This 207-nucleotide RNA was probed chemically with 2A3. It was measured as part of the RMDB library OK3TST. Values cover nucleotides 27 to 156.
RNA sequence: GGGAACGACUCGAGUAGAGUCGAAAAGUUACCUAUCACUAUGCUAAAAAUUUUCAAACAAGAUCAUUGACACCAAUGUUUGUAAUGUUUAAGAAGGUUUUUGAAAAGUCUAAGCAGGAUUUAAUUACUUCCUUUAAUGUCAUGGGUGAUGAGGCCACGGUACCCUGAGAUUCGUCUCAGGGUACCGAAAAGAAACAACAACAACAAC
Reactivity to 2A3 in 0.01 (KOAc 150mM, MgCl2 10mM, bicine 150mM(pH8.5), 24C), signal-to-noise 1, nucleotides 027 to 156: g000u000u040a060c000c000u000a080u040c000a020c040u040a090u020g090c060u260a140a150a230a230a280u190u270u230u230c150a050a140a000c190a040a260g000a090u110c060a060u060u220g240a230c040a060c030c010a080a080u000g060u000u000u110g060u040a080a080u040g000u000u060u000a160a140g000a000a210g190g000u000u090u000u090u000g190a180a200a000a000g040u000c130u090a020a040g170c000a020g020g020a000u060u060u060a080a140u060u120a080c000u010u010c000c000u060u090u090a120a030u070g020u220c000a000u060g000g090g000u000g000a000u040g000a070g060g110c090c060a040